An RNA of 177 nucleotides, treated with 2A3 and DMS and read out base by base.
High 2A3 reactivity points to a flexible backbone, as in loops and unpaired stretches.
Values cover nucleotides 27 to 126.
It was measured as part of the RMDB libraries RFM100 and RFMREP.
2A3 adducts were read by reverse transcription with SuperScript II with manganese.
For DMS the reverse transcriptase was MarathonRT.
RNA sequence: GGGAACGACUCGAGUAGAGUCGAAAAUUGGGUAACCAUUUCAUCUUUUCAUGUCAUAUAUCUCCUGCCUCUCACGGUUUCAUCUGUGAGAAGCUUCAAAGAACUGCAAUAGAAGUCUAGCUCGAGAUCCGUUAGUGAGAUUCGUCUCACUAACGGAAAAAGAAACAACAACAACAAC
Reactivity to 2A3 in 0.01 (KOAc 150mM, MgCl2 10mM, bicine 150mM(pH8.5), 24C), signal-to-noise 5, nucleotides 027 to 126: u080u040g040g000g020u070a080a120c030c020a030u020u030u090c040a120u030c060u050u080u080u070c060a090u100g060u070c080a020u110a020u010a070u230c020u050c010c040u030g020c010c010u020c010u000c000a000c010g000g040u070u240u130c100a210u060c000u010g000u010g000a010g010a010a010g000c000u080u050c060a090a120a050g040a070a070c080u090g030c080a030a070u070a120g020a070a010g060u020c030u050a020g010c010u020c020g020a030g000a070
Reactivity to DMS in 0.01 (KOAc 150mM, MgCl2 10mM, bicine 150mM(pH8.5), 24C), signal-to-noise 2, nucleotides 027 to 126: u010u000g000g030g000u010a100a090c040c010a060u000u000u000c070a120u020c010u000u020u020u000c030a110u000g020u000c050a050u010a140u000a140u010c040u020c000c020u010g000c050c020u000c000u020c000a000c020g000g000u000u030u050c180a020u020c010u000g000u010g010a000g000a060a070g000c000u010u040c170a080a060a070g000a040a160c110u000g000c090a040a050u020a090g010a050a090g010u000c030u010a090g000c030u000c080g000a060g010a180